[RMDB]
RNA sequence: GGGAACGACUCGAGUAGAGUCGAAAAUGAAACUCUAAAACAUACCAUUUUCCUCAGACAUGAGGAUCACCCAUGUCCGUCUAAGUUAGGAGAGGUGAAGAAUACGACCACCUAGAGAAAAAAAAAACUACGUAUACAAGUUCGCUUGUAUACGUAGAAAAGAAACAACAACAACAAC
Reactivity to DMS in 0.01 (KOAc 150mM, MgCl2 10mM, bicine 150mM(pH8.5), 24C), signal-to-noise 3, nucleotides 027 to 126: u000g010a210a130a120c060u000c030u020a070a090a140a130c080a060u000a100c050c010a120u010u000u010u000c020c000u000c040a060g000a060c200a040u010g000a050g000g010a120u000c190a080c010c000c010a040u000g010u010c000c040g010u000c070u010a030a090g030u000u020a130g000g000a060g000a110g000g030u020g000a100a060g010a090a100u010a050c080g010a060c060c020a040c030c020u010a020g010a080g000a000a000a010a000a020a140a030a140a060a130
Reactivity to 2A3 in 0.01 (KOAc 150mM, MgCl2 10mM, bicine 150mM(pH8.5), 24C), signal-to-noise 2, nucleotides 027 to 126: u070g000a090a020a030c080u050c070u170a090a060a030a080c030a070u160a080c070c000a060u050u020u040u010c000c000u000c010a040g000a110c080a120u100g010a070g050g000a010u080c030a110c000c000c000a020u060g030u000c040c040g040u010c060u110a090a160g040u060u070a070g030g050a080g000a020g040g010u020g040a040a110g040a070a050u130a070c030g050a040c010c010a010c000c010u020a020g020a010g060a120a030a010a000a020a000a000a000a060a050

Conditions: 150 mM KOAc, 10 mM MgCl2 and 150 mM bicine (pH 8.5), 24 C. Structure probing data (DMS and 2A3) for a 177-nucleotide construct. As a SHAPE reagent, 2A3 marks flexible, mostly unpaired nucleotides at the ribose 2'-OH. For 2A3 the reverse transcriptase was SuperScript II with manganese. In probing experiments dimethyl sulfate is read out at A N1 and C N3, which are open when not base-paired. It was measured as part of the RMDB library M2PK90.